[RMDB]
RNA sequence: GGGAACGACUCGAGUAGAGUCGAAAACGAGCUAACUACGGUUAGCUCGAAGAUAACCGCGUGAGCGGUUAUCAAGUCCGACGUGAGUCGGACAGAUGUGCGUGAGCACAUCACUAACCUACUACGGUAGGUUAGAGUUCACCGGUGACGGUGAACAACUCAGGUACGUGAGUACCUGAGAGCUGGCGGUGACGCCAGCAAGGUAUGCUACGGCAUACCAGCCCCAUGGAGGUGGCUGGGGCCAGCCUCAUGGAGGUGGCUGGGGUAGUUCUAUCUUCGGAUAGAACAAAAGAAACAACAACAACAAC
Reactivity to DMS in 0.01 (KOAc 150mM, MgCl2 10mM, bicine 150mM(pH8.5), 24C), signal-to-noise 2, nucleotides 027 to 266: c020g010a000g000c000u000a010a020c000u010a150c090g020g000u000u010a000g010c010u000c010g000a000a070g000a010u000a000a010c000c000g030c020g000u020g000a120g040c000g000g020u000u010a000u020c000a140a100g010u000c000c010g020a030c000g000u030g010a300g020u010c000g010g000a000c010a040g010a000u000g020u010g000c000g010u040g020a300g030c000a020c010a000u000c000a300c050u000a000a000c010c000u000a000c000u000a090c150g000g000u000a000g020g000u010u000a000g000a200g010u000u010c000a010c000c000g000g000u020g010a100c000g010g000u000g030a010a000c000a120a120c010u000c010a010g000g000u000a000c000g000u030g000a230g010u010a000c000c010u020g000a000g000a100g000c010u000g000g000c000g000g030u010g000a130c000g000c010c000a010g030c000a070a010g000g010u000a010u000g000c020u000a070c220g030g020c000a010u000a000c020c000a090g000c000c010c000c050a050u000g000g010a060g000g050u010g000g010c000u000g000g020g000g040c020c020a030g020c000c030u000c010a020u010g020g000a160g000g060u000g000g020c080u000g030g000g000g000u020a200
Reactivity to 2A3 in 0.01 (KOAc 150mM, MgCl2 10mM, bicine 150mM(pH8.5), 24C), signal-to-noise 4, nucleotides 027 to 266: c000g000a000g000c000u000a000a000c000u040a020c250g090g010u000u000a000g000c000u000c000g000a000a010g000a000u000a000a000c000c000g000c020g030u070g070a090g010c000g010g000u000u000a000u000c000a000a020g000u000c000c000g000a000c020g130u140g080a090g000u010c000g000g000a000c010a030g000a000u000g000u010g000c030g040u120g070a030g000c000a000c000a000u000c000a010c000u000a000a000c000c000u010a000c000u020a040c250g130g010u000a000g000g000u000u000a000g000a010g010u000u000c000a000c000c010g010g020u060g040a030c010g010g000u000g000a000a000c000a000a010c000u000c000a010g000g000u000a010c000g090u080g150a080g010u000a000c000c000u000g000a000g000a000g000c000u010g000g000c000g010g060u090g040a010c000g000c010c000a000g000c000a000a000g000g000u010a000u010g000c000u030a030c250g110g000c010a010u000a010c000c000a010g020c000c010c010c000a020u080g150g050a070g050g040u090g050g010c110u110g070g050g090g060c020c020a070g170c010c020u020c030a060u090g060g030a120g060g060u090g050g000c060u090g000g000g010g010u060a080